[RMDB]
Structure probing data (DMS and 2A3) for a 177-nucleotide construct. Source: RMDB library TTRDEL, as collected in RNAgym. The RNA was probed in 150 mM KOAc, 10 mM MgCl2 and 150 mM bicine (pH 8.5) at 24 C. For 2A3, 6,330 sequencing reads were counted. 2A3 adducts were read by reverse transcription with SuperScript II with manganese. Reactivities are given for positions 27 through 126.

RNA sequence: GGGAACGACUCGAGUAGAGUCGAAAAGAUAUGGAUUGAACUACAACAGAAGUGGCGUUGAAAUCGGAAACGAUGGAGCCAUUCUCGUUGCAAUCCUAAGUCAAACUGCCACCUUCGGGUGGCAGAACUAUAGCACACAGUUCGCUGUGUGCUAUAGAAAAGAAACAACAACAACAAC
Reactivity to DMS in 0.01 (KOAc 150mM, MgCl2 10mM, bicine 150mM(pH8.5), 24C), signal-to-noise 4, nucleotides 027 to 126: g000a030u000a300u000g010g000a010u000u000g010a050a050c070u020a300c010a010a010c010a030g010a030a010g050u010g010g000c030g000u000u010g010a070a140a020u010c000g000g010a100a130a150c000g020a010u000g000g010a090g000c000c010a020u000u000c020u000c190g010u000u010g000c010a010a000u000c010c000u000a050a170g010u010c050a060a080a200c020u000g010c010c000a020c000c000u000u000c200g010g010g030u000g010g000c000a000g010a030a100
Reactivity to 2A3 in 0.01 (KOAc 150mM, MgCl2 10mM, bicine 150mM(pH8.5), 24C), signal-to-noise 3, nucleotides 027 to 126: g020a020u070a040u180g000g000a000u020u030g010a100a070c090u180a060c300a030a000c020a050g030a090a080g300u060g050g000c030g250u300u060g050a040a040a020u010c000g010g040a030a080a010c000g000a000u020g000g020a010g010c010c000a000u030u020c020u030c090g020u000u020g010c000a000a010u010c020c010u010a160a000g050u040c020a040a070a120c000u000g000c000c010a010c000c010u050u070c300g150g000g020u000g000g000c000a000g000a000a010